[RMDB]
RNA sequence: GGGAACGACUCGAGUAGAGUCGAAAAUAAGGGAUCAGAAAGCGAAUAUUUUGUUCCAGAUAAUCUCAGGUGAAUCACAAGCUCAGUAUUGCUUUAUAUUAUACUUUCUUGAGAUCCUUAGGAGUAACGCCGAGUAGGGAUUCGUCCCUACUCGGCGAAAAGAAACAACAACAACAAC
Reactivity to 2A3 in 0.01 (KOAc 150mM, MgCl2 10mM, bicine 150mM(pH8.5), 24C), signal-to-noise 2, nucleotides 027 to 126: u210a000a000g050g000g000a000u000c020a000g020a000a000a000g040c130g130a130a000u000a050u170u070u070u060g140u050u030c190c000a000g000a130u060a000a180u040c010u000c000a010g300g000u070g030a060a110u160c000a020c040a210a000g010c000u110c160a020g100u140a270u160u130g080c060u110u000u020a060u000a010u210u000a000u060a300c000u090u040u040c000u150u170g050a060g000a010u000c000c000u070u000a030g000g000a000g020u070a020a020